[RMDB]
RNA sequence: GGGAACGACUCGAGUAGAGUCGAAAAGAUAUGGAGACGUCGUAGUGCCAGAUGGACAUCGGAAACGAUGUCCCAUCGGCAAUACUACACGUCUCCUAAGUCAAAUGGACCUUCUUCGGAAGGUCCAGUCGAUUGUAAGCUUCGGCUUACAAUCGACAAAAGAAACAACAACAACAAC
Reactivity to DMS in 0.01 (KOAc 150mM, MgCl2 10mM, bicine 150mM(pH8.5), 24C), signal-to-noise 1, nucleotides 027 to 126: g000a050u000a280u000g000g000a000g000a040c000g000u020c190g030u000a020g030u000g020c000c020a130g020a040u010g000g000a070c000a000u000c000g040g000a070a120a090c000g020a010u000g000u000c070c010c020a000u010c090g000g010c000a100a090u040a300c010u040a000c050a010c000g020u000c000u000c000c000u010a000a020g000u000c010a090a140a280u000g040g000a010c000c010u010u000c040u000u000c140g060g020a030a000g040g000u000c010c000a000
Reactivity to 2A3 in 0.01 (KOAc 150mM, MgCl2 10mM, bicine 150mM(pH8.5), 24C), signal-to-noise 1, nucleotides 027 to 126: g020a000u030a000u130g030g000a000g000a010c030g000u110c130g000u090a000g000u000g120c030c090a100g060a080u060g000g020a000c000a000u000c020g020g000a070a090a000c000g000a010u000g010u000c050c070c000a000u000c010g000g020c000a010a050u120a070c000u020a010c000a030c010g010u040c000u000c000c000u000a010a000g000u010c020a010a100a170u130g000g000a000c000c000u030u000c030u090u060c300g140g020a050a000g090g000u050c000c010a000

Chemical mapping of a 177-nucleotide RNA with DMS and 2A3. For 2A3 the reverse transcriptase was SuperScript II with manganese. Values are in units of 0.01, from 0 to 300, in steps of 10. The reactions ran in a buffer of 150 mM KOAc, 10 mM MgCl2 and 150 mM bicine (pH 8.5), at 24 C.